Structure probing data (2A3 and DMS) for a 177-nucleotide construct.
Source: RMDB library OK2TRN, as collected in RNAgym.
2A3 adducts were read by reverse transcription with SuperScript II with manganese.
For 2A3, 3,513 sequencing reads were counted.
The RNA was probed in 150 mM KOAc, 10 mM MgCl2 and 150 mM bicine (pH 8.5) at 24 C.

RNA sequence: GGGAACGACUCGAGUAGAGUCGAAAAAUGUGCUUCAUUGAGAGCUGCGUGGGCGUCGGCGAGAUCGCCAUCUCUGACCACAGAUCCAGCGCACACACUCCGCAGGAGCUUGCGCGGAUUGCCAGUGCGUACCAUGGUGGUUCGCCACCAUGGUACGAAAAGAAACAACAACAACAAC
Reactivity to 2A3 in 0.01 (KOAc 150mM, MgCl2 10mM, bicine 150mM(pH8.5), 24C), signal-to-noise 1, nucleotides 027 to 126: a000u140g040u050g060c020u060u090c030a170u110u200g070a090g000a010g160c060u070g020c050g040u070g040g050g000c020g030u080c050g040g020c040g030a060g040a140u140c050g020c020c020a060u050c040u000c010u030g090a070c020c000a030c030a040g000a010u000c000c020a070g000c000g000c010a000c000a010c000a010c040u020c020c030g120c180a230g000g040a010g080c040u060u060g010c010g000c000g000g030a040u020u060g040c020c030a060g050u070g090
Reactivity to DMS in 0.01 (KOAc 150mM, MgCl2 10mM, bicine 150mM(pH8.5), 24C), signal-to-noise 4, nucleotides 027 to 126: a080u010g010u000g010c050u010u010c040a100u010u000g010a150g010a100g010c050u000g020c080g030u010g010g020g020c050g010u000c050g010g000c060g020a120g020a060u000c050g000c050c030a100u000c020u010c020u010g000a090c300c050a060c080a120g000a050u000c040c040a130g030c020g010c020a060c300a120c200a150c030u000c020c020g010c200a090g010g000a050g000c140u010u000g010c020g020c020g010g000a030u000u010g000c090c100a100g000u000g010